[RMDB]
RNA sequence: GGGAACGACUCGAGUAGAGUCGAAAAGUCACUCAAUUCGUUGAGUGACAUACUGGGCCCGGAGUCGCGCAUGAAAGGGUCAAGACGCGCUCGAUAAUAUAACUAGUUGCCAGUUCGCUGGCAACAACGUACCUACUCUGUUCGCAGAGUAGGUACGAAAAGAAACAACAACAACAAC
Reactivity to DMS in 0.01 (KOAc 150mM, MgCl2 10mM, bicine 150mM(pH8.5), 24C), signal-to-noise 2, nucleotides 027 to 126: g000u000c010a020c000u010c000a010a020u000u010c160g020u000u000g010a010g000u000g000a010c000a000u000a020c130u020g030g000g000c000c010c000g000g010a080g010u010c030g010c070g020c100a110u020g000a060a130a090g040g000g000u010c020a110a080g010a140c020g010c060g000c010u000c020g010a080u030a100a080u000a100u020a070a080c180u020a120g000u000u000g000c000c010a010g010u010u010c240g020c000u000g000g000c010a000a000c010a010a100
Reactivity to 2A3 in 0.01 (KOAc 150mM, MgCl2 10mM, bicine 150mM(pH8.5), 24C), signal-to-noise 5, nucleotides 027 to 126: g010u000c000a000c010u010c000a010a010u100u050c220g070u070u030g000a000g000u020g000a000c000a000u030a000c010u060g040g060g020c020c030c000g040g000a010g030u240c050g010c000g000c080a050u110g120a120a070a120g170g040g010u080c020a010a010g070a050c010g010c010g020c020u010c010g060a080u090a300a100u160a050u050a130a120c100u070a080g000u000u000g000c000c000a000g010u040u050c190g040c080u000g020g000c000a000a000c000a000a000